Chemical mapping of a 177-nucleotide RNA with 2A3 and DMS. Reactivities are given for positions 27 through 126.
[RMDB]
RNA sequence: GGGAACGACUCGAGUAGAGUCGAAAAACCGUCGUCGCGUUUCGGGCUACAGCCUGUUGCUGGACUCUGUGAGACACCUGACCGACCGCUGAGCGACUGACUGGUCCACAGCGCCGGCAAGAUGAAGGUUACGCGUAGCUUUCGAGCUACGCGUAACAAAAGAAACAACAACAACAAC
Reactivity to 2A3 in 0.01 (KOAc 150mM, MgCl2 10mM, bicine 150mM(pH8.5), 24C), signal-to-noise 3, nucleotides 027 to 126: a000c000c020g030u010c010g000u020c000g020c030g050u040u040u040c030g000g000g040c010u030a050c000a040g040c000c000u110g060u100u100g030c040u020g000g020a070c020u000c020u080g040u030g090a090g010a040c020a030c040c060u040g110a110c010c010g030a060c040c010g030c100u170g060a050g010c060g130a150c020u010g040a050c050u080g020g050u000c000c010a030c000a010g000c010g000c040c000g010g020c010a040a010g060a070u200g100a100a080g120
Reactivity to DMS in 0.01 (KOAc 150mM, MgCl2 10mM, bicine 150mM(pH8.5), 24C), signal-to-noise 2, nucleotides 027 to 126: a040c010c010g050u000c060g070u010c090g050c050g030u000u010u030c030g030g000g000c030u010a030c220a140g000c050c020u000g040u000u010g030c020u000g020g040a110c040u000c010u050g000u030g000a140g000a090c030a040c080c000u000g010a180c140c010g010a160c170c050g030c030u000g000a200g010c180g040a100c060u020g000a090c150u000g000g000u000c010c000a180c010a030g000c110g070c010c000g000g000c050a090a100g000a170u010g020a120a160g000
High 2A3 reactivity points to a flexible backbone, as in loops and unpaired stretches. Reactivities are rounded to 0.1 and cut off at 0 and 3. For 2A3, 1,690 sequencing reads were counted.